[RMDB]
RNA sequence: GGGAACGACUCGAGUAGAGUCGAAAAGAUAUGGAAUGGAAGCUCAUCGAUCUAACUGCGUCGGAAACGACGUUUAGGGAGAGCCCAUUCCUAAGUCAAAAGACUCUGAUCUUCGGAUCAGAGUCAACUAUCGGUUCUAGUUCGCUAGAACCGAUAGAAAAGAAACAACAACAACAAC
Reactivity to 2A3 in 0.01 (KOAc 150mM, MgCl2 10mM, bicine 150mM(pH8.5), 24C), signal-to-noise 2, nucleotides 027 to 126: g010a010u000a010u050g000g010a010a000u010g000g050a200a110g040c000u010c010a210u300c140g010a010u000c020u010a000a040c070u070g040c030g010u000c000g030g000a030a010a010c010g000a000c000g010u000u010u000a030g010g000g000a030g000a000g010c000c000c000a000u000u000c020c000u000a020a000g020u000c000a050a000a110a220g010a010c000u040c010u010g020a020u000c000u040u120c300g170g000a010u000c000a020g000a000g000u000c000a000a000
Reactivity to DMS in 0.01 (KOAc 150mM, MgCl2 10mM, bicine 150mM(pH8.5), 24C), signal-to-noise 3, nucleotides 027 to 126: g000a020u010a040u000g000g000a010a000u000g000g000a200a300g010c000u010c000a250u000c240g010a080u000c000u000a000a050c300u010g000c040g000u000c000g010g010a010a000a010c010g030a000c000g010u000u000u000a000g000g010g000a020g000a000g000c030c010c000a000u000u000c000c000u000a000a090g000u000c000a130a150a150a160g000a020c000u000c000u000g000a010u000c000u000u020c300g020g000a020u000c000a010g000a010g000u000c000a020a070
This 177-nucleotide RNA was probed chemically with 2A3 and DMS. Conditions: 150 mM KOAc, 10 mM MgCl2 and 150 mM bicine (pH 8.5), 24 C. Values cover nucleotides 27 to 126. For DMS the reverse transcriptase was MarathonRT. 2A3 adducts were read by reverse transcription with SuperScript II with manganese. The 2A3 profile rests on 5,597 reads. The data come from the RNA Mapping Database (RMDB), library TTRDES.